[RMDB]
RNA sequence: GGGAACGACUCGAGUAGAGUCGAAAAAUAAAAAUAAAAACCCUUUUCAGCUGGGCCUCUUGGUAGUUUUCCUGGCCACCCAGGAGGUCUUGAGGAAGAGGUGGACGGCCAGAAUGAAAAAUAAAAAGUAAUCUACAUCUUUCGAGAUGUAGAUUACAAAAGAAACAACAACAACAAC
Reactivity to 2A3 in 0.01 (KOAc 150mM, MgCl2 10mM, bicine 150mM(pH8.5), 24C), signal-to-noise 1, nucleotides 027 to 126: a000u300a020a030a000a010a020u160a000a160a000a070a010c000c000c000u000u000u000u050c080a140g060c060u220g000g000g000c000c020u000c000u010u000g050g050u020a200g020u000u040u200u140c010c000u000g000g020c000c000a000c020c020c010a020g000g000a000g010g040u010c010u020u000g050a050g000g040a010a000g000a040g060g040u100g220g040a080c000g020g000c000c000a030g030a050a070u140g060a000a010a000a020a100u160a020a030a030a000a000